[RMDB]
RNA sequence: GGGAACGACUCGAGUAGAGUCGAAAAGGAGCUGACCCUGUCGAAUGUUGGAGACCUCGUCGACAUGGGAGCGUAUGUGAAUCUGGUGGAAGAGAAGAGGGAGAAGGGGGGACCCGGGGCAACUCCGACAUAGAACGACAUUCGUGUCGUUCUAUGUAAAAGAAACAACAACAACAAC
Reactivity to DMS in 0.01 (KOAc 150mM, MgCl2 10mM, bicine 150mM(pH8.5), 24C), signal-to-noise 4, nucleotides 027 to 126: g010g000a120g020c030u000g010a150c010c010c020u000g020u000c010g000a070a050u000g010u010u010g000g010a190g010a170c070c010u000c030g010u000c010g000a020c020a020u010g030g010g000a070g020c090g010u010a080u010g010u000g000a070a110u010c090u000g000g010u000g000g000a100a100g010a110g000a100a070g010a160g000g000g000a100g010a110a080g020g000g010g000g000g000a070c090c050c040g020g010g010g010c070a060a070c050u000c030c030g000
Reactivity to 2A3 in 0.01 (KOAc 150mM, MgCl2 10mM, bicine 150mM(pH8.5), 24C), signal-to-noise 2, nucleotides 027 to 126: g070g020a030g040c030u040g090a210c000c010c020u010g010u020c010g020a160a170u110g040u150u110g160g070a110g060a180c040c000u030c030g010u010c010g000a010c030a060u160g000g000g010a040g000c020g050u100a100u200g160u050g040a050a060u080c070u080g060g040u070g020g080a100a060g050a030g000a150a030g030a100g040g010g000a080g030a080a050g010g010g010g000g000g000a010c000c080c030g020g000g010g010c000a030a010c020u010c020c000g010